Structure probing data (2A3 and DMS) for a 177-nucleotide construct. DMS adducts were read by reverse transcription with MarathonRT. The 2A3 profile rests on 3,608 reads. The RNA was probed in 150 mM KOAc, 10 mM MgCl2 and 150 mM bicine (pH 8.5) at 24 C. Values cover nucleotides 27 to 126.

RNA sequence: GGGAACGACUCGAGUAGAGUCGAAAACGCGAUAUAUUACGGCGCGCAUAUAUGCAUGCCGUAGCCGCGAUGCGCUAGCCGCGGCCGUAGCGCCGAUCGAUUAAUGCUAUAAUAUGCGCUAGCGCGCCAAUUUACUGCACUUCGGUGCAGUAAAUUGAAAAGAAACAACAACAACAAC
Reactivity to 2A3 in 0.01 (KOAc 150mM, MgCl2 10mM, bicine 150mM(pH8.5), 24C), signal-to-noise 4, nucleotides 027 to 126: c020g020c000g050a000u030a010u020a050u300u070a050c020g000g010c000g030c010g000c050a010u170a030u070a050u300g030c020a010u060g030c000c010g010u010a010g020c020c000g000c010g010a040u140g000c000g000c020u000a000g030c060c030g000c010g020g000c010c000g150u120a050g000c030g000c110c040g050a130u150c050g010a030u020u300a170a080u210g000c020u020a020u030a270a160u100a090u210g050c040g020c000u000a000g010c000g000c000g000c000
Reactivity to DMS in 0.01 (KOAc 150mM, MgCl2 10mM, bicine 150mM(pH8.5), 24C), signal-to-noise 4, nucleotides 027 to 126: c020g010c040g010a080u010a070u010a100u010u000a020c000g010g040c000g020c040g000c000a130u010a140u000a100u000g010c010a040u000g010c000c020g000u000a010g020c070c000g000c000g000a120u010g010c010g010c010u000a020g000c010c030g030c000g010g020c040c120g010u010a060g010c050g020c070c060g010a120u010c090g010a150u000u010a090a090u020g010c040u010a090u000a080a060u000a110u010g010c060g010c020u000a020g020c020g020c000g020c210